[RMDB]
RNA sequence: GGGAACGACUCGAGUAGAGUCGAAAAUGAACAGCAUGGUAGUCAAACUUAACAACGCCGGUUUCCUCGGCAAAACAGUAACCAAAAGCAACUGCGACGGAAGCUCAGACGCGGGGGUAUGCGUCAAAUUUAUUACGGAGUUCGCUCCGUAAUAAAUAAAAGAAACAACAACAACAAC
Reactivity to DMS in 0.01 (KOAc 150mM, MgCl2 10mM, bicine 150mM(pH8.5), 24C), signal-to-noise 8, nucleotides 027 to 126: u020g010a100a090c080a060g000c040a040u010g010g030u000a040g000u010c060a070a070a070c070u010u020a070a090c160a100a090c120g000c000c050g000g010u010u030u010c060c040u010c030g000g000c060a030a030a100a150c130a060g000u020a070a110c050c060a080a060a100a140g010c080a090a070c050u010g010c030g010a070c120g010g010a070a080g010c040u000c090a080g010a070c070g000c020g000g000g000g000g000u020a010u020g010c020g010u000c070a050a060
Reactivity to 2A3 in 0.01 (KOAc 150mM, MgCl2 10mM, bicine 150mM(pH8.5), 24C), signal-to-noise 9, nucleotides 027 to 126: u110g020a040a030c010a020g040c020a030u060g040g040u080a070g070u080c050a070a070a070c060u090u150a070a030c070a030a050c080g010c010c000g020g000u030u070u040c020c020u050c020g030g010c000a030a050a020a020c050a030g040u070a030a040c010c030a060a090a030a020g040c030a030a070c040u060g010c030g040a030c020g040g020a040a010g020c010u030c070a040g010a050c020g010c030g020g010g000g010g040u100a030u150g010c020g020u020c000a050a060
The record gives the reactivity of an RNA of 177 nucleotides to DMS and 2A3. DMS adducts were read by reverse transcription with MarathonRT. Reactivities are given for positions 27 through 126. Reactivities are rounded to 0.1 and cut off at 0 and 3. For 2A3, 15,787 sequencing reads were counted.